[RMDB]
RNA sequence: GGGAACGACUCGAGUAGAGUCGAAAAGAUAUGGACAAGAGUACGUACAGAGCAUCGAUCUAUAGUGGUGUCGGAAACGACACGUAACAUCUAUAGGGAGCUCAUGUACGUACUCUUGUCCUAAGUCCCUUCUGAUCAGGUUCGCCUGAUCAGAAGGAAAAGAAACAACAACAACAAC
Reactivity to DMS in 0.01 (KOAc 150mM, MgCl2 10mM, bicine 150mM(pH8.5), 24C), signal-to-noise 2, nucleotides 027 to 126: g010a110u010a270u000g000g000a010c010a010a000g010a040g000u000a020c000g020u000a010c010a010g030a020g030c010a300u000c200g010a120u020c010u010a020u000a000g020u000g000g000u000g000u000c000g020g020a120a060a200c000g000a010c000a000c000g000u000a050a120c240a020u000c000u000a020u010a000g000g000g030a030g040c010u010c000a060u010g040u010a010c000g020u000a000c000u000c000u000u000g000u000c020c000u000a010a100g000u000c020

The record gives the reactivity of an RNA of 177 nucleotides to DMS. The data come from the RNA Mapping Database (RMDB), library TTRINS. Values cover nucleotides 27 to 126.